[RMDB]
RNA sequence: GGGAACGACUCGAGUAGAGUCGAAAAUCGAGCCCGGGGAUAGCUGGUUCCCCCCGAGACAUACCGCAGUAUGACCCGUCCGGAGGUUGGCGGUGGGGUAGAGCACUGAUAGGAGGAUCCGGGGGGUAACAGUAUUCUUUUUCGAAAGAAUACUGUUAAAAGAAACAACAACAACAAC
Reactivity to DMS in 0.01 (KOAc 150mM, MgCl2 10mM, bicine 150mM(pH8.5), 24C), signal-to-noise 8, nucleotides 027 to 126: u020c070g010a110g010c030c010c020g010g000g000g010a080u010a050g010c070u000g000g010u010u010c000c000c000c010c010c000g000a100g010a130c090a140u030a070c010c020g000c030a060g000u020a090u030g000a050c020c000c010g000u010c030c030g010g010a100g010g000u000u010g010g000c020g000g010u000g000g000g000g010u000a070g010a130g030c110a050c030u010g000a070u030a160g010g000a120g000g000a180u010c050c020g000g000g000g000g000g010u010
Reactivity to 2A3 in 0.01 (KOAc 150mM, MgCl2 10mM, bicine 150mM(pH8.5), 24C), signal-to-noise 9, nucleotides 027 to 126: u100c010g010a020g020c000c010c010g010g000g000g010a120u080a070g050c050u060g060g030u060u070c000c000c000c000c000c000g080a100g010a130c040a050u170a050c000c010g000c020a010g020u120a090u160g090a060c000c000c020g070u090c020c020g120g050a100g110g050u080u070g070g010c020g020g000u070g030g020g010g010u070a070g020a020g150c040a010c040u020g010a090u110a150g030g040a040g030g010a040u000c010c000g000g000g000g000g000g000u000
Conditions: 150 mM KOAc, 10 mM MgCl2 and 150 mM bicine (pH 8.5), 24 C. An RNA of 177 nucleotides, treated with DMS and 2A3 and read out base by base. Values cover nucleotides 27 to 126. DMS adducts were read by reverse transcription with MarathonRT.